[RMDB]
RNA sequence: GGGAACGACUCGAGUAGAGUCGAAAACUUAUCCAGAACCAACCGCUUGAACUGCUUGUACUCGGUGAGUGAUUUGACCGCGUCAGCAUUGACCCACUUCCUGACCUCUUCGAUCGGAAGCCAGUUCGUAGUCCCCAUGAAUCGAAGGGCGCCCAAACUCCUGAAGGUAAUUCGUUACCUUCAGGAGAAAAGAAACAACAACAACAAC
Reactivity to DMS in 0.01 (KOAc 150mM, MgCl2 10mM, bicine 150mM(pH8.5), 24C), signal-to-noise 1, nucleotides 027 to 156: c050u000u000a090u000c010c000a150g020a120a120c130c040a080a010c030c030g010c000u000u000g010a010a080c020u000g010c030u040u000g030u000a050c050u000c020g050g020u000g000a110g040u000g020a170u000u030u010g020a090c060c030g000c160g070u000c040a050g020c080a090u000u010g020a130c000c000c040a130c030u010u000c000c000u010g010a020c040c000u000c040u010u000c040g000a050u000c080g020g000a040a090g090c000c040a050g030u000u000c050g030u000a130g010u000c020c030c040c020a130u010g010a080a120u000c000g000a060a080g000g020g020c040g050c030c000c030a010a110a250
Reactivity to 2A3 in 0.01 (KOAc 150mM, MgCl2 10mM, bicine 150mM(pH8.5), 24C), signal-to-noise 4, nucleotides 027 to 156: c030u100u080a040u100c030c020a020g060a090a060c010c020a000a030c000c050g060c070u060u140g040a070a070c060u050g010c020u070u210g030u090a020c020u010c040g020g020u070g020a100g040u110g080a210u080u060u270g080a040c030c040g000c050g030u000c030a040g010c040a090u010u110g090a070c010c000c010a050c020u040u050c030c020u070g050a110c010c010u030c020u080u020c020g090a120u020c020g040g020a010a030g000c030c020a030g030u040u040c050g050u090a060g060u090c000c000c010c000a060u150g040a060a030u040c020g010a020a030g020g010g020c010g000c030c000c010a050a040a030

An RNA of 207 nucleotides, treated with DMS and 2A3 and read out base by base. For DMS, 2,176 sequencing reads were counted. The RNA was probed in 150 mM KOAc, 10 mM MgCl2 and 150 mM bicine (pH 8.5) at 24 C.